Structure probing data (2A3 and DMS) for a 207-nucleotide construct. The reactions ran in a buffer of 150 mM KOAc, 10 mM MgCl2 and 150 mM bicine (pH 8.5), at 24 C. 2A3 adducts were read by reverse transcription with SuperScript II with manganese. For DMS, 7,323 sequencing reads were counted.
RNA sequence: GGGAACGACUCGAGUAGAGUCGAAAAUGUAAAUCUUAUUUGCAAGGCUGAUGGAUCAAUCAAUUGAAAGCUGAGCCCAGCAGGUGAGGGAAAACUCCCGUCUUUGUCAUGGCGCGUGUCCACUCCUCAAGGCCAUGGAGAUUCGGACCGAAGGGUAGUCAUUAAAUGGUUUCGACCAUUUAAUGACAAAAGAAACAACAACAACAAC
Reactivity to 2A3 in 0.01 (KOAc 150mM, MgCl2 10mM, bicine 150mM(pH8.5), 24C), signal-to-noise 6, nucleotides 027 to 156: u160g010u080a030a070a060u060c030u060u130a070u110u080u040g030c040a070a050g010g000c000u050g010a080u140g090g040a070u060c040a090a030u030c050a080a190u110u130g070a140a040a020g050c040u030g020a010g000c000c000c020a020g000c010a000g030g020u030g030a020g030g000g000a030a060a070a060c050u050c000c020c010g040u010c060u040u120u110g090u060c040a080u090g040g000c030g010c030g080u100g020u050c020c010a030c030u030c010c010u060c070a070a060g100g000c020c020a050u050g020g000a030g000a070u110u200c090g000g020a010c010c000g060a040a030g070g000g020u070a050
Reactivity to DMS in 0.01 (KOAc 150mM, MgCl2 10mM, bicine 150mM(pH8.5), 24C), signal-to-noise 3, nucleotides 027 to 156: u020g020u000a040a060a120u000c040u000u000a070u000u000u000g010c040a090a120g010g030c050u010g050a110u000g010g010a080u000c050a070a190u000c070a080a130u000u010g000a090a060a180g010c000u010g000a090g010c020c010c020a230g000c020a100g010g030u000g000a080g010g020g010a050a030a060a130c080u010c000c010c000g010u000c050u000u010u000g010u000c040a090u010g040g030c020g020c040g010u000g020u000c000c020a110c020u010c030c010u010c060a060a140g010g000c060c030a130u000g020g000a060g000a100u000u000c030g030g010a040c010c020g010a100a060g010g030g000u010a160